[RMDB]
RNA sequence: GGGAACGACUCGAGUAGAGUCGAAAAGCGCCCCGUCAUUGGGGAGUAGCCGCUCUUCACCGCGAAGAGGCUUGCGUCAACACACUUGGUCCAUCGGACCAUGGCGCAGGCAGCUCCUGGCCUGGCACGUACGCAUCUAGUUCGCUAGAUGCGUACGAAAAGAAACAACAACAACAAC
Reactivity to DMS in 0.01 (KOAc 150mM, MgCl2 10mM, bicine 150mM(pH8.5), 24C), signal-to-noise 1, nucleotides 027 to 126: g010c070g000c010c000c000c020g010u010c190a180u000u000g060g000g010g020a010g020u000a070g000c080c070g030c030u000c040u000u010c030a100c120c040g000c110g010a050a040g000a060g000g020c010u030u010g000c000g010u000c020a050a200c190a080c180a150c260u010u000g030g010u000c000c000a190u010c230g010g030a010c010c000a030u000g000g000c000g020c000a000g010g000c020a130g010c020u000c010c040u000g010g040c050c060u000g000g020c130a290
Reactivity to 2A3 in 0.01 (KOAc 150mM, MgCl2 10mM, bicine 150mM(pH8.5), 24C), signal-to-noise 1, nucleotides 027 to 126: g030c040g020c010c000c030c010g050u110c080a130u090u220g040g010g000g020a000g000u050a010g010c030c030g000c000u000c000u010u050c030a080c080c200g010c150g090a030a010g000a010g060g000c000u030u000g000c010g010u000c020a000a140c040a040c040a030c230u040u090g010g040u020c020c030a300u160c200g000g030a000c000c000a040u010g000g000c030g060c000a000g000g020c000a020g010c000u000c060c020u030g000g020c040c040u010g000g000c010a010
About this RNA: The record gives the reactivity of an RNA of 177 nucleotides to DMS and 2A3. For 2A3 the reverse transcriptase was SuperScript II with manganese. Conditions: 150 mM KOAc, 10 mM MgCl2 and 150 mM bicine (pH 8.5), 24 C. For DMS, 861 sequencing reads were counted.